[RMDB]
RNA sequence: GGGAACGACUCGAGUAGAGUCGAAAAUAUUGACUUUAUAGCACAUAGACCUGCUAGUGUGGAAGGACUUUGGUGAAGGUGGUCAUUUGGAUCUUGGAGAUAAACUAGAGAGCUCUAUUCUGACAACUAGCAUUUCAGAAAUUUUUCCAUGUAGAAAUGAUUAGCCAUGAUUCGUCAUGGCUAAUCAAAAAGAAACAACAACAACAAC
Reactivity to 2A3 in 0.01 (KOAc 150mM, MgCl2 10mM, bicine 150mM(pH8.5), 24C), signal-to-noise 2, nucleotides 027 to 156: u200a040u010u140g010a020c020u050u130u090a110u090a080g020c030a030c000a050u060a020g030a120c010c020u030g020c020u060a110g110u050g030u040g140g040a040a060g050g010a010c000u000u000u020g000g000u020g010a010a000g010g000u050g000g020u010c020a050u070u020u040g000g000a000u010c000u020u010g000g000a020g000a000u070a060a040a000c030u070a050g030a010g010a010g120c000u000c020u040a110u060u010c030u130g070a020c000a080a040c030u020a000g040c020a010u050u000u100c030a040g090a100a080a050u160u090u050u080u110c020c070a020u210g030u250a030g040a060a090a300
Reactivity to DMS in 0.01 (KOAc 150mM, MgCl2 10mM, bicine 150mM(pH8.5), 24C), signal-to-noise 1, nucleotides 027 to 156: u000a110u000u000g030a080c020u010u010u000a150u010a120g000c000a110c020a080u010a130g000a100c070c100u020g030c050u000a040g030u000g000u000g010g000a140a210g030g020a020c060u000u010u020g000g020u000g020a070a080g020g060u010g020g020u040c020a160u010u000u030g000g000a020u030c020u000u010g040g020a040g000a130u000a030a040a120c060u000a190g020a160g030a120g000c030u000c090u010a120u000u000c050u020g000a070c030a020a110c050u000a170g010c040a140u010u000u120c020a070g010a030a130a300u030u000u000u000u000c000c020a160u020g000u010a120g000a070a100a180